The record gives the reactivity of an RNA of 207 nucleotides to 2A3 and DMS. The DMS profile rests on 2,060 reads. Conditions: 150 mM KOAc, 10 mM MgCl2 and 150 mM bicine (pH 8.5), 24 C. For 2A3 the reverse transcriptase was SuperScript II with manganese.
[RMDB]
RNA sequence: GGGAACGACUCGAGUAGAGUCGAAAAUGAGUUAAUGCGUACCCAAUCACCAAUUGAAAAAUCGGUCACAUCAUCAACACCAAAAGAAGUGUCGCCAAUAGCAAUAUCAUUUGUUAAAACUGCAUUGGUUGCUUUAGGCGCUUGUGCGCGAUCAUUACCUUGCUGCAUUAUUCGUAAUGCAGCAAGGAAAAGAAACAACAACAACAAC
Reactivity to 2A3 in 0.01 (KOAc 150mM, MgCl2 10mM, bicine 150mM(pH8.5), 24C), signal-to-noise 3, nucleotides 027 to 156: u070g040a030g090u170u170a140a070u280g010c050g000u040a050c050c050c000a010a080u050c010a010c040c000a080a150u090u190g080a140a040a000a010a000u070c080g050g020u070c060a030c000a080u160c000a030u100c030a050a080c010a050c050c050a090a120a050a020g040a090a070g020u000g050u100c030g000c010c000a060a030u050a030g000c000a010a020u030a030u130c040a050u020u060u070g090u060u090a100a190a030a150c160u100g000c000a010u030u010g000g000u010u030g040c000u040u050u120a030g020g020c000g040c030u090u080g010u030g030c010g000c000g000a020u020c020a050u030u130a070
Reactivity to DMS in 0.01 (KOAc 150mM, MgCl2 10mM, bicine 150mM(pH8.5), 24C), signal-to-noise 1, nucleotides 027 to 156: u000g000a100g000u030u000a060a080u010g020c070g070u000a290c030c030c010a020a190u000c020a080c030c040a040a160u000u000g000a040a050a120a040a070u010c010g020g000u010c050a070c060a090u000c090a110u020c080a030a050c030a030c010c000a060a070a100a160g000a110a100g010u000g020u010c040g060c010c000a040a140u000a080g020c040a010a010u010a100u000c030a090u000u010u020g030u000u000a010a150a050a150c170u000g030c010a070u010u000g000g010u000u000g000c000u000u010u000a180g000g000c010g020c070u030u000g010u000g030c060g010c000g000a110u000c050a070u000u000a110